About this RNA
Chemical mapping of a 177-nucleotide RNA with DMS and 2A3. The reactions ran in a buffer of 150 mM KOAc, 10 mM MgCl2 and 150 mM bicine (pH 8.5), at 24 C.
[RMDB]
RNA sequence: GGGAACGACUCGAGUAGAGUCGAAAAGAGAAAUAGCUAUAAAGCUCAGGAGGGAUAGCGCCAUGGCUCACCAGUGCUGUAUGUUUUGUAUAUGCGUACAUGUAUAUCUGUUGGCGCUAUCCAUCCUCUUGAUUAUAUUGUUCGCAAUAUAAUCAAGAAAAGAAACAACAACAACAAC
Reactivity to DMS in 0.01 (KOAc 150mM, MgCl2 10mM, bicine 150mM(pH8.5), 24C), signal-to-noise 7, nucleotides 027 to 126: g010a190g000a070a090a100u000a050g010c020u000a120u010a100a110a090g020c020u000c250a050g010g010a030g010g000g000a010u000a010g010c000g010c010c000a020u000g010g000c090u000c090a050c210c040a050g010u000g000c020u010g010u000a010u000g000u000u000u000u010g010u010a110u010a040u000g000c020g000u000a010c010a030u010g020u000a070u010a080u010c020u000g010u000u000g010g010c010g010c000u000a000u000c010c010a010u000c000c010u000
Reactivity to 2A3 in 0.01 (KOAc 150mM, MgCl2 10mM, bicine 150mM(pH8.5), 24C), signal-to-noise 9, nucleotides 027 to 126: g120a000g080a020a120a100u150a050g000c040u060a050u110a300a300a020g010c010u030c110a020g000g010a010g000g000g010a000u000a000g000c000g000c010c000a020u040g060g000c040u030c070a050c040c020a010g010u010g020c010u020g020u010a020u010g050u020u060u110u130g250u080a140u030a020u300g010c010g000u010a010c010a040u200g030u040a100u010a040u190c020u020g140u060u040g030g000c010g000c000u000a000u000c000c000a000u000c000c000u000